[RMDB]
Structure probing data (DMS and 2A3) for a 177-nucleotide construct. The data come from the RNA Mapping Database (RMDB), library OK1LIB. The DMS profile rests on 12,134 reads. DMS adducts were read by reverse transcription with MarathonRT. Reactivities are given for positions 27 through 126. The reactions ran in a buffer of 150 mM KOAc, 10 mM MgCl2 and 150 mM bicine (pH 8.5), at 24 C.

RNA sequence: GGGAACGACUCGAGUAGAGUCGAAAAGCACGUCCGGUAAGGCCCGUGCGAACACUUGAGCUCCGGCUUGGCCGCUCUUGUGGAUUAGGACGUUCUAGCUCCGGCUUGGCCGCUAGUUCGUCCGAAACACCUAUACGCAUUUCGAUGCGUAUAGGUGAAAAGAAACAACAACAACAAC
Reactivity to DMS in 0.01 (KOAc 150mM, MgCl2 10mM, bicine 150mM(pH8.5), 24C), signal-to-noise 5, nucleotides 027 to 126: g010c000a010c040g000u020c030c020g010g020u070a100a090g000g000c300c220c030g040u000g000c010g010a150a110c010a020c020u010u000g000a060g000c040u010c070c010g010g000c070u030u020g010g020c060c190g010c000u000c030u000u000g000u010g000g000a110u020u020a100g010g010a010c000g000u000u000c000u020a000g010c030u020c100c030g000g000c090u060u040g000g040c080c140g000c000u000a000g010u000u000c020g010u000c000c000g010a060a080a150
Reactivity to 2A3 in 0.01 (KOAc 150mM, MgCl2 10mM, bicine 150mM(pH8.5), 24C), signal-to-noise 9, nucleotides 027 to 126: g010c000a010c010g040u040c030c020g030g150u300a130a090g090g010c060c100c010g000u010g010c000g010a050a000c010a000c000u010u020g010a000g000c020u070c070c030g160g000c120u200u220g170g010c030c020g000c010u000c000u010u020g010u020g030g030a040u060u170a050g000g000a000c010g000u000u000c000u000a010g000c030u060c110c020g150g020c150u140u240g140g010c030c030g000c010u000a000g020u000u000c000g000u000c000c000g010a000a000a000